The record gives the reactivity of an RNA of 177 nucleotides to DMS. It was measured as part of the RMDB library TTRINS. Conditions: 150 mM KOAc, 10 mM MgCl2 and 150 mM bicine (pH 8.5), 24 C.

RNA sequence: GGGAACGACUCGAGUAGAGUCGAAAAGAUAUGGAUUAGAAGUCACGCGCUUUCGAUGAAAUAACGGCUGUUCGGAAACGAACAGCCGUUAUGGAGAAAGCGAACUACGUGUCACUAAUCCUAAGUCCUUAGUUAAAGACUUCGGUCUUUAACUAAGAAAAGAAACAACAACAACAAC
Reactivity to DMS in 0.01 (KOAc 150mM, MgCl2 10mM, bicine 150mM(pH8.5), 24C), signal-to-noise 2, nucleotides 027 to 126: g000a070u000a170u010g000g000a010u000u020a000g000a170a230g020u000c010a000c000g020c030g010c000u000u000u000c000g000a150u030g010a160a110a010u000a010a010c000g000g020c010u000g010u000u010c000g030g020a100a080a160c010g000a020a020c000a000g000c010c020g000u000u000a000u000g000g010a170g000a020a010a020g010c020g010a030a030c180u000a300c030g000u010g010u000c000a300c000u000a010a000u000c000c000u000a050a110g000u000c030

For DMS, 2,711 sequencing reads were counted. In probing experiments dimethyl sulfate is read out at A N1 and C N3, which are open when not base-paired. Values cover nucleotides 27 to 126.